[RMDB]
RNA sequence: GGGAACGACUCGAGUAGAGUCGAAAAUAGUAUGGGUGGCCUGGAAAAGCUCUCAGCUCUUAGAGUAACAUUAAUGAAGUAACAGGAGGCAAAAGGCCUGGAGCUAUGCUCAGCUUAGGGGUAGCUGCUUCUGACAGCGAUUCGUCGCUGUCAGAAGAAAAGAAACAACAACAACAAC
Reactivity to 2A3 in 0.01 (KOAc 150mM, MgCl2 10mM, bicine 150mM(pH8.5), 24C), signal-to-noise 1, nucleotides 027 to 126: u100a000g060u160a050u050g000g050g100u080g040g050c000c120u000g040g000a040a020a020a020g040c000u000c000u000c070a060g000c000u000c000u000u070a000g000a030g000u150a020a070c050a090u170u220a220a070u110g260a000a110g060u100a000a000c000a010g080g060a000g050g000c000a000a190a000a000g100g050c000c000u000g020g010a000g020c070u040a000u250g020c000u000c020a030g110c070u090u050a120g000g000g000g000u000a000g000c000u020g000
Reactivity to DMS in 0.01 (KOAc 150mM, MgCl2 10mM, bicine 150mM(pH8.5), 24C), signal-to-noise 1, nucleotides 027 to 126: u000a040g000u030a050u000g000g010g040u020g010g050c010c020u000g000g000a040a060a100a110g000c030u000c050u000c090a090g000c000u000c040u000u020a060g000a120g020u030a070a060c130a120u000u000a090a080u070g000a070a070g000u030a130a090c180a020g000g000a080g000g030c050a040a080a060a140g000g020c000c010u000g000g000a030g000c000u020a070u000g000c030u000c010a010g020c040u000u000a150g010g000g000g060u020a060g000c030u000g000